[RMDB]
RNA sequence: GGGAACGACUCGAGUAGAGUCGAAAAGAUAUGGAGAUGUCAUAAGGGAGAGAGAGUAUCGGAAACGAUACGAUCUCGAGGAUCUUAUGAGCAUCUCCUAAGUCAAAGAUCACUGUUCGCAGUGAUCGAGACGGAUGGUGUUCGCACCAUCCGUCUCAAAAGAAACAACAACAACAAC
Reactivity to DMS in 0.01 (KOAc 150mM, MgCl2 10mM, bicine 150mM(pH8.5), 24C), signal-to-noise 1, nucleotides 027 to 126: g000a060u000a300u010g000g010a010g030a000u000g030u010c010a030u000a010a010g000g000g000a000g020a030g000a010g010a300g000u000a000u010c010g000g000a140a090a270c010g030a040u000a010c000g000a080u000c000u000c000g020a050g040g000a010u010c000u000u000a000u000g000a110g010c010a020u000c020u000c000c000u000a010a010g000u020c040a130a140a180g000a000u000c000a000c000u010g030u000u030c300g040c020a000g010u000g000a000u000c000
Reactivity to 2A3 in 0.01 (KOAc 150mM, MgCl2 10mM, bicine 150mM(pH8.5), 24C), signal-to-noise 1, nucleotides 027 to 126: g020a020u080a040u140g010g000a020g000a010u000g010u010c000a000u000a010a000g030g050g010a030g000a010g000a020g000a010g040u000a000u000c000g020g010a050a120a050c020g000a010u000a020c000g020a050u000c000u000c010g040a100g000g020a000u000c000u010u010a010u010g050a090g050c040a010u030c000u000c010c000u010a050a000g000u000c040a080a190a080g000a020u000c000a000c030u030g090u070u060c300g050c180a000g000u000g000a000u020c050
The record gives the reactivity of an RNA of 177 nucleotides to DMS and 2A3.
It was measured as part of the RMDB library TTRDES.
For 2A3, 2,691 sequencing reads were counted.
The RNA was probed in 150 mM KOAc, 10 mM MgCl2 and 150 mM bicine (pH 8.5) at 24 C.